[RMDB]
An RNA of 177 nucleotides, treated with DMS and 2A3 and read out base by base. For 2A3 the reverse transcriptase was SuperScript II with manganese. The data come from the RNA Mapping Database (RMDB), library M2PK50. For 2A3, 4,712 sequencing reads were counted. DMS adducts were read by reverse transcription with MarathonRT.

RNA sequence: GGGAACGACUCGAGUAGAGUCGAAAACGACAGAACUUCGGUUCUGUCGAAAUAAAAACAGCGGUUAAAAAGCUGGCGUUAUAACCGCUGAACGCCAGCUUAAAAGAUUCGUGUUCGCACGAAUCAACUCUAUUAUAAAGUUCGCUUUAUAAUAGAGAAAAGAAACAACAACAACAAC
Reactivity to DMS in 0.01 (KOAc 150mM, MgCl2 10mM, bicine 150mM(pH8.5), 24C), signal-to-noise 3, nucleotides 027 to 126: c030g020a010c010a000g000a010a010c000u000u020c170g040g000u000u000c000u000g010u000c000g000a010a050a050u010a040a090a050a080a060c050a040g000c030g010g000u010u000a050a080a110a010a020g000c010u000g010g010c010g000u010u000a040u000a070a100c060c040g000c030u010g000a010a010c010g010c000c000a010g010c000u000u010a010a040a100a120g000a000u000u000c000g030u000g010u000u010c200g000c000a000c000g000a020a000u000c010a060a140
Reactivity to 2A3 in 0.01 (KOAc 150mM, MgCl2 10mM, bicine 150mM(pH8.5), 24C), signal-to-noise 3, nucleotides 027 to 126: c000g000a000c000a010g010a000a000c010u040u160c210g070g010u000u000c000u000g010u000c000g000a000a000a000u060a010a060a010a000a000c020a030g040c040g100g070u110u150a180a140a040a000a030g010c010u010g000g000c000g000u040u060a090u040a200a020c020c020g000c070u040g030a000a000c000g000c010c000a000g000c010u010u050a040a050a010a070g000a000u000u000c000g000u000g070u060u080c260g010c070a000c000g000a000a000u000c000a000a010